[RMDB]
RNA sequence: GGGAACGACUCGAGUAGAGUCGAAAAGUCACACUAGGAUUCUAAAAGUAGAAGCGAUAAUGGCUCCUAACAGAAUCUUAGUGUGGAGCUUAAAGAUAAAUGAGCCAUUAUCGCUUACUUUAAGCAAGAUUGUAGUCGAGUUCGCUCGAUUGCAAUCAAAAGAAACAACAACAACAAC
Reactivity to DMS in 0.01 (KOAc 150mM, MgCl2 10mM, bicine 150mM(pH8.5), 24C), signal-to-noise 8, nucleotides 027 to 126: g010u020c010a010c010a000c010u000a000g000g000a010u010u010c010u010a080a060a060a080g000u020a060g010a060a030g000c010g010a020u010a010a010u000g000g010c000u000c020c290u050a070a070c190a040g000a020a000u000c000u000u000a000g010u010g020u000g010g000a080g010c030u010u010a060a080a070g010a130u050a060a080a070u040g000a010g010c000c010a030u010u000a010u010c040g000c000u000u000a020c050u010u010u010a090a100g010c180a100a120
Reactivity to 2A3 in 0.01 (KOAc 150mM, MgCl2 10mM, bicine 150mM(pH8.5), 24C), signal-to-noise 9, nucleotides 027 to 126: g040u040c000a000c000a000c000u000a000g010g010a010u010u010c030u140a080a060a060a030g090u100a090g080a260a010g020c000g000a010u010a010a010u010g010g000c000u050c040c060u130a160a050c060a070g010a010a000u000c000u000u000a000g000u000g000u000g000g000a000g000c000u120u170a110a130a020g110a080u170a150a190a150u300g010a000g000c010c000a010u010u010a010u010c000g000c000u000u000a010c000u010u070u090a060a020g070c030a090a090

Source: RMDB library OK1LIB, as collected in RNAgym.
The record gives the reactivity of an RNA of 177 nucleotides to DMS and 2A3.
DMS adducts were read by reverse transcription with MarathonRT.
The reactions ran in a buffer of 150 mM KOAc, 10 mM MgCl2 and 150 mM bicine (pH 8.5), at 24 C.
Reactivities are rounded to 0.1 and cut off at 0 and 3.